Source information
The record gives the reactivity of an RNA of 177 nucleotides to DMS and 2A3. DMS adducts were read by reverse transcription with MarathonRT. Reactivities are given for positions 27 through 126. 2A3 is a SHAPE reagent: it acylates the 2'-hydroxyl of flexible nucleotides of all four kinds. Conditions: 150 mM KOAc, 10 mM MgCl2 and 150 mM bicine (pH 8.5), 24 C. It was measured as part of the RMDB library TTRDES.

RNA sequence: GGGAACGACUCGAGUAGAGUCGAAAAGAUAUGGAUCCCAGGCUAGCUCUAUGUCGGAAACGACAUACGAGCUUGGACCCUGUGGAUCCUAAGUCAAAAGAUGAAGGAAUGUUCGCAUUCCUUCAUCGAACGUGUAACAGUUCGCUGUUACACGUUCAAAAGAAACAACAACAACAAC
Reactivity to DMS in 0.01 (KOAc 150mM, MgCl2 10mM, bicine 150mM(pH8.5), 24C), signal-to-noise 9, nucleotides 027 to 126: g000a020u000a020u010g000g010a010u000c000c000c010a010g000g020c000u000a000g020c000u010c000u000a010u000g010u000c000g020g000a000a000a030c000g020a010c000a000u000a000c270g020a010g010c000u000u000g010g000a020c300c000c000u000g010u020g020g000a000u000c000c000u000a000a080g000u000c010a070a100a130a230g000a010u000g010a000a010g000g010a020a010u000g010u000u010c190g010c010a010u000u000c000c000u000u000c000a000u000c000
Reactivity to 2A3 in 0.01 (KOAc 150mM, MgCl2 10mM, bicine 150mM(pH8.5), 24C), signal-to-noise 6, nucleotides 027 to 126: g000a000u010a010u040g000g000a000u000c000c000c000a000g000g000c010u030a010g000c000u000c000u000a000u010g000u000c000g000g000a010a000a000c000g000a000c010a000u030a060c180g000a000g000c000u010u180g000g000a000c010c000c000u060g130u300g030g000a000u000c000c000u000a000a000g010u000c010a020a020a100a210g000a000u010g000a000a000g000g010a010a000u020g030u090u180c300g000c150a000u010u010c000c000u000u000c000a000u000c000